[RMDB]
RNA sequence: GGGAACGACUCGAGUAGAGUCGAAAAUCAUGGUGAUUACAAGGAUGACGACGAUAAGGAAAACCUCUAUUUUCAGGGUAGUGCGCAAAUCGAUCAGAAAGCUCACGUACCGCACUUUUCUAAGCUACAACCUUUUGUAGCCGUAAGUGUAUCGCCAGUUAACGGAGCUGUUCGCAGCUCCGUUAACAAAAGAAACAACAACAACAAC
Reactivity to 2A3 in 0.01 (KOAc 150mM, MgCl2 10mM, bicine 150mM(pH8.5), 24C), signal-to-noise 2, nucleotides 027 to 156: u130c020a040u080g040g000u030g030a070u060u200a100c050a130a030g050g000a060u100g070a020c020g020a000c000g040a050u080a160a080g080g030a040a010a020a040c010c000u090c060u050a160u080u100u040u090c080a050g000g030g040u050a030g000u040g020c040g000c000a000a140a160u100c060g110a110u150c030a020g070a100a050a000g030c010u010c040a050c050g020u030a040c010c000g000c000a000c000u010u050u100u040c030u110a000a070g000c000u000a000c010a020a120c100c080u070u280u190u070g000u000a000g000c010c000g010u020a000a090g000u010g030u050a010u050c020g000c030c010a010

The record gives the reactivity of an RNA of 207 nucleotides to 2A3.